[RMDB]
RNA sequence: GGGAACGACUCGAGUAGAGUCGAAAAAGCGAGGGCGGCAAGCUCACCGAAGCCGUCAGGCGGCGGCCGUUCUCAGUGGUGCUGAUGGAUGAGAUUGAGAAGGCGCACCCAGAUGUCUUCAACAUCCUGACGAUUAAACUUUCGAGUUUAAUCGUCAAAAAGAAACAACAACAACAAC
Reactivity to 2A3 in 0.01 (KOAc 150mM, MgCl2 10mM, bicine 150mM(pH8.5), 24C), signal-to-noise 2, nucleotides 027 to 126: a000g120c080g010a010g030g000g000c020g020g010c050a090a080g060c040u040c030a050c040c030g080a060a030g030c000c070g020u060c050a010g060g040c060g000g010c000g030g000c000c010g000u030u000c010u000c030a030g110u050g090g040u050g000c070u100g040a080u080g000g060a010u050g030a050g060a130u040u190g070a120g000a100a000g000g000c040g000c010a040c000c020c010a020g070a110u090g000u020c000u090u050c020a030a040c000a050u040c000c020
Reactivity to DMS in 0.01 (KOAc 150mM, MgCl2 10mM, bicine 150mM(pH8.5), 24C), signal-to-noise 3, nucleotides 027 to 126: a110g010c090g000a040g000g020g010c020g010g000c050a080a130g010c030u010c070a100c070c040g010a120a110g040c050c050g000u010c160a090g020g030c110g000g030c030g000g020c010c010g010u000u000c000u030c010a150g000u010g020g010u010g010c060u000g010a110u000g000g000a040u000g010a090g020a150u010u010g010a280g000a040a020g030g010c000g010c090a100c050c040c040a160g010a070u000g010u000c030u000u000c020a090a190c110a030u010c030c060

Chemical mapping of a 177-nucleotide RNA with 2A3 and DMS.
Reactivities are rounded to 0.1 and cut off at 0 and 3.
For DMS, 2,623 sequencing reads were counted.
For 2A3 the reverse transcriptase was SuperScript II with manganese.
The data come from the RNA Mapping Database (RMDB), library OK2TST.
The RNA was probed in 150 mM KOAc, 10 mM MgCl2 and 150 mM bicine (pH 8.5) at 24 C.